[RMDB]
RNA sequence: GGGAACGACUCGAGUAGAGUCGAAAAAUUCACAAUGUGUUUUCACUGAGCUUGAUGCCCAUCUAACGCCUAAUAUUGAUGCAUCUUUGUUCAAAGAGUUGAGCAAAUAUAUUCGUGGUAUUAGCGAGCUGAGUAUUAGCUUCGGCUAAUACUCAGCAAAAGAAACAACAACAACAAC
Reactivity to 2A3 in 0.01 (KOAc 150mM, MgCl2 10mM, bicine 150mM(pH8.5), 24C), signal-to-noise 4, nucleotides 027 to 126: a010u180u090c040a050c040a090a060u090g040u030g040u070u080u100u190c060a040c040u050g020a010g040c070u040u100g060a010u150g040c020c000c000a030u030c060u060a200a040c020g050c010c000u010a040a030u060a050u090u110g250a040u060g030c030a080u010c000u040u010u010g060u000u030c050a060a050a040g260a300g150u070u030g010a010g000c020a000a050a000u100a020u020a030u070u060c060g020u040g050g020u060a070u000u020a030g030c030g080a020
Reactivity to DMS in 0.01 (KOAc 150mM, MgCl2 10mM, bicine 150mM(pH8.5), 24C), signal-to-noise 2, nucleotides 027 to 126: a000u010u000c070a040c060a190a030u070g000u010g020u000u010u000u000c030a050c010u000g000a300g020c110u040u010g000a040u020g010c030c040c000a090u030c180u000a090a020c090g000c140c030u000a030a040u040a010u000u010g010a180u060g000c190a010u000c060u000u000u000g020u000u010c130a030a090a170g010a160g010u010u000g000a050g000c050a000a000a010u040a070u010a090u000u000c050g000u000g040g000u000a040u000u000a070g000c140g000a040